Annotation
Structure probing data (DMS and 2A3) for a 177-nucleotide construct. It was measured as part of the RMDB library OK1LIB. The DMS profile rests on 27,535 reads.

[RMDB]
RNA sequence: GGGAACGACUCGAGUAGAGUCGAAAAGAUCGGUGCAAAAGUUACCCUUCGUGGUGAACGUAUGUACGAAUUCUUGGAUAAAUUGGUAUCAGUUUCACUUCCACGUGUACGUGACUUCCACGGUGUCCGGGUAAAUAAUGUUCGCAUUAUUUACCCGAAAAGAAACAACAACAACAAC
Reactivity to DMS in 0.01 (KOAc 150mM, MgCl2 10mM, bicine 150mM(pH8.5), 24C), signal-to-noise 8, nucleotides 027 to 126: g010a020u010c070g020g010u010g010c000a010a020a090a200g000u000u010a040c020c010c020u030u030c270g010u050g010g010u000g020a040a000c000g010u000a110u010g000u000a030c000g010a050a080u010u010c030u000u000g000g000a120u010a030a060a070u020u000g010g010u020a050u020c070a090g000u010u000u010c050a060c070u000u000c070c060a070c100g010u010g000u000a050c080g000u000g000a080c090u010u010c040c020a040c080g000g010u010g010u010c090
Reactivity to 2A3 in 0.01 (KOAc 150mM, MgCl2 10mM, bicine 150mM(pH8.5), 24C), signal-to-noise 9, nucleotides 027 to 126: g040a030u080c080g070g090u070g020c030a020a030a020a040g020u030u040a080c000c010c000u130u180c140g100u300g020g030u160g110a030a000c000g010u050a020u040g030u020a000c010g010a010a050u100u050c030u040u090g040g010a060u110a130a130a100u140u100g070g020u130a070u190c050a060g040u030u090u070c060a050c050u120u060c030c010a050c070g060u070g030u070a050c050g030u030g090a060c030u120u040c040c010a020c040g060g010u070g020u040c030